[RMDB]
RNA sequence: GGGAACGACUCGAGUAGAGUCGAAAACUACCAACCAUGGGAAAAACCCUGGCUCCAAGACCCGCGGAACCAGGCCGGGAGCCUAUUGGGAAGUAGACUUCACCGAGGUAAAGCCUGGAAAAUAUGGUGGUUCAUGACAUUUCGAUGUCAUGAACCAAAAAGAAACAACAACAACAAC
Reactivity to DMS in 0.01 (KOAc 150mM, MgCl2 10mM, bicine 150mM(pH8.5), 24C), signal-to-noise 1, nucleotides 027 to 126: c140u000a130c060c060a150a300c020c030a050u010g000g010g000a120a010a000a050a030c120c000c150u000g050g060c000u000c000c060a040a040g000a090c000c040c020g040c130g000g000a140a060c000c000a000g000g050c000c060g010g000g000a050g020c000c000u000a090u070u050g000g000g010a030a060g000u000a130g000a130c050u000u000c000a060c000c000g000a040g000g000u020a030a060a260g000c000c000u000g000g030a100a090a100a140u030a130u010g010g000
Reactivity to 2A3 in 0.01 (KOAc 150mM, MgCl2 10mM, bicine 150mM(pH8.5), 24C), signal-to-noise 3, nucleotides 027 to 126: c040u060a070c000c030a030a020c040c030a110u170g020g010g110a020a110a000a200a220c000c000c050u040g020g010c000u000c000c000a110a000g070a040c000c000c040g040c130g090g000a150a050c000c000a000g000g050c040c000g120g000g030a000g080c000c040u060a180u120u160g000g050g010a040a010g080u210a070g060a170c000u020u060c090a150c190c000g030a030g060g080u090a050a070a040g030c000c000u000g000g190a010a000a010a010u300a040u020g030g020